Conditions: 150 mM KOAc, 10 mM MgCl2 and 150 mM bicine (pH 8.5), 24 C. Chemical mapping of a 207-nucleotide RNA with DMS and 2A3. 2A3 adducts were read by reverse transcription with SuperScript II with manganese. Values cover nucleotides 27 to 156. DMS adducts were read by reverse transcription with MarathonRT.
RNA sequence: GGGAACGACUCGAGUAGAGUCGAAAAACAGAAAAAAGGAGUUUAAAUUAGAUUUGCAAACGGACGGUACUAAAUACCGUCACUUUUACGUCUAACAUAUCGUUAACUCUGCAAAAAGAAAACAAGAAAAACAAGCGUGAGUUCGCUCACGCUUGAACAAUAUAGUUAAGUUCGCUUAACUAUAUUGAAAAGAAACAACAACAACAAC
Reactivity to DMS in 0.01 (KOAc 150mM, MgCl2 10mM, bicine 150mM(pH8.5), 24C), signal-to-noise 2, nucleotides 027 to 156: a190c050a160g000a010a070a040a140a180a210g030g000a050g000u010u040u000a060a100a140u000u000a020g000a040u000u000u030g120c050a020a040a000c080g010g010a030c000g080g000u000a030c050u000a090a080a300u000a020c020c000g020u000c000a000c020u000u000u000u000a010c030g010u000c010u000a030a020c070a160u020a070u020c100g030u000u000a010a010c020u000c020u000g000c110a040a110a040a060a130g000a110a030a060a030c020a020a070g020a090a090a080a060a150c010a020a000g010c000g000u000g000a050g000u000u020c300g040c000u000c000a000c000g000c000u000u010g010a000a130
Reactivity to 2A3 in 0.01 (KOAc 150mM, MgCl2 10mM, bicine 150mM(pH8.5), 24C), signal-to-noise 4, nucleotides 027 to 156: a000c020a020g130a020a140a010a010a020a030g030g020a030g010u100u100u130a060a110a050u050u030a020g010a030u100u070u210g050c060a030a020a020c030g020g000a000c000g010g000u020a030c060u250a100a110a090u050a010c000c000g000u000c000a060c000u000u020u010u030a020c030g000u000c030u030a010a030c030a090u160a040u130c030g040u010u040a010a010c010u000c020u080g020c060a030a040a070a050a000g080a020a070a010a020c070a070a040g100a110a090a040a010a000c000a000a000g000c010g000u000g010a010g020u070u110c140g020c120u000c000a000c020g000c000u000u000g000a000a000